Annotation
An RNA of 177 nucleotides, treated with DMS and 2A3 and read out base by base. DMS adducts were read by reverse transcription with MarathonRT. Values are in units of 0.01, from 0 to 300, in steps of 10. It was measured as part of the RMDB library OK1LIB. The reactions ran in a buffer of 150 mM KOAc, 10 mM MgCl2 and 150 mM bicine (pH 8.5), at 24 C.
RNA sequence: GGGAACGACUCGAGUAGAGUCGAAAAGAAAAAGACGUGGAAGUACAGAAACGGCAAGAUACGAAAGUAUCGAUGUACUGAAGACAUGAGUGAAAUGCCGUAAACUCUUGUCUGACACGUCGAAAAAGGGUUUAUAUUGCUUCGGCAAUAUAAACCCAAAAGAAACAACAACAACAAC
Reactivity to DMS in 0.01 (KOAc 150mM, MgCl2 10mM, bicine 150mM(pH8.5), 24C), signal-to-noise 3, nucleotides 027 to 126: g010a080a130a040a110a060g030a010c000g040u000g070g000a200a010g000u000a000c010a050g000a130a150a100c000g000g010c010a200a110g000a030u000a000c000g010a100a050a170g000u010a000u000c010g000a060u010g010u000a000c000u000g000a090a040g000a020c010a000u000g000a000g030u010g000a070a090a170u040g000c020c000g000u000a040a150a010c000u000c000u010u000g000u000c000u000g000a170c000a010c000g000u000c010g020a000a020a050a070a060
Reactivity to 2A3 in 0.01 (KOAc 150mM, MgCl2 10mM, bicine 150mM(pH8.5), 24C), signal-to-noise 2, nucleotides 027 to 126: g080a020a100a010a010a020g010a000c000g000u020g040g030a090a000g010u020a000c020a000g070a060a090a000c000g000g000c010a060a070g030a000u000a000c000g040a210a000a010g020u000a000u010c060g000a010u060g010u000a020c040u040g040a020a000g010a000c000a000u040g000a000g010u100g050a170a060a090u210g010c000c000g010u020a130a010a010c000u010c000u000u030g000u000c000u000g000a030c000a000c000g030u020c010g040a010a010a000a000a000